This 177-nucleotide RNA was probed chemically with DMS and 2A3. Source: RMDB library OK2TRN, as collected in RNAgym. Conditions: 150 mM KOAc, 10 mM MgCl2 and 150 mM bicine (pH 8.5), 24 C. DMS adducts were read by reverse transcription with MarathonRT.

[RMDB]
RNA sequence: GGGAACGACUCGAGUAGAGUCGAAAACGCCGCGGCUUUGUCGCCAGUCAUUUGCCAGUGAAUAACCCGUGGCUUAUCAGCAUUGGUAAUCCAAUCAAGAUGAUACUGGCUACCGUGUUGCAGUGCCAGGUAGUAGCCUAUUCGUAGGCUACUACCUAAAAGAAACAACAACAACAAC
Reactivity to DMS in 0.01 (KOAc 150mM, MgCl2 10mM, bicine 150mM(pH8.5), 24C), signal-to-noise 3, nucleotides 027 to 126: c120g020c030c050g040c030g000g000c140u010u000u000g010u000c110g000c010c060a040g020u010c060a070u000u000u000g010c090c020a040g010u000g000a100a070u000a090a100c080c050c030g020u000g000g000c050u010u010a050u020c080a090g020c160a070u010u010g010g020u010a070a100u000c050c030a020a040u010c120a070a130g010a080u010g000a100u010a030c030u010g000g000c130u000a060c020c060g020u000g010u000u000g050c050a110g030u000g000c050c020
Reactivity to 2A3 in 0.01 (KOAc 150mM, MgCl2 10mM, bicine 150mM(pH8.5), 24C), signal-to-noise 2, nucleotides 027 to 126: c050g000c020c020g050c040g060g030c070u070u090u250g040u100c020g010c040c050a000g020u040c010a030u030u030u120g040c040c030a050g020u020g220a190a080u110a080a070c010c070c000g130u060g020g000c080u080u090a230u160c050a030g070c030a060u050u130g000g030u100a140a110u080c050c010a040a020u050c070a100a040g070a140u110g000a000u030a150c000u010g000g000c000u010a010c000c030g040u040g080u130u060g090c080a020g070u030g140c030c000